[RMDB]
RNA sequence: GGGAACGACUCGAGUAGAGUCGAAAAGUGUAGUUCCAUACAUUUCUGAGCUAUAAGAAAAAGGUAUAGUGAUGAUGUGUUAAGUGCCAUGCUUCAGAUCUGAAGGUUGUGUAAUAAUUUUCAUGACUGCGCUUGUACAGACGAUUUCACCAUUGGCACGGUUCAUUAGUUUCGACUAAUGAACCGUAAAAGAAACAACAACAACAAC
Reactivity to DMS in 0.01 (KOAc 150mM, MgCl2 10mM, bicine 150mM(pH8.5), 24C), signal-to-noise 3, nucleotides 027 to 156: g000u000g050u000a020g020u020u000c050c030a200u000a030c040a060u010u000u000c020u000g000a300g010c010u000a040u010a040a200g020a050a110a100a130a150g010g010u000a030u010a050g010u000g000a250u000g000a040u000g030u010g030u020u000a100a110g000u010g020c000c020a080u000g020c030u000u000c050a090g020a110u000c040u020g000a120a160g020g010u000u000g020u010g020u000a090a100u020a050a140u000u000u000u000c020a050u000g000a040c020u010g020c140g040c070u000u000g040u000a070c030a080g000a050c060g000a180u010u000u020c040a070c020c020a130u000u010g020g020c080
Reactivity to 2A3 in 0.01 (KOAc 150mM, MgCl2 10mM, bicine 150mM(pH8.5), 24C), signal-to-noise 5, nucleotides 027 to 156: g050u080g020u050a040g010u020u010c030c000a020u070a120c030a020u040u040u010c020u030g030a000g000c010u010a030u070a130a080g150a120a150a040a030a010g130g000u040a030u010a030g020u040g040a050u000g000a020u020g060u000g010u070u090a090a010g010u020g020c010c010a030u060g020c010u040u050c050a100g020a300u050c050u030g030a030a020g050g000u030u020g030u020g010u060a020a030u070a110a070u070u080u030u080c030a020u100g020a010c000u020g010c030g000c060u050u090g030u070a020c020a020g070a020c020g030a050u020u070u060c090a080c060c000a040u040u080g010g000c020
The record gives the reactivity of an RNA of 207 nucleotides to DMS and 2A3. The reactions ran in a buffer of 150 mM KOAc, 10 mM MgCl2 and 150 mM bicine (pH 8.5), at 24 C. Source: RMDB library OK3TST, as collected in RNAgym. For DMS the reverse transcriptase was MarathonRT. 2A3 adducts were read by reverse transcription with SuperScript II with manganese.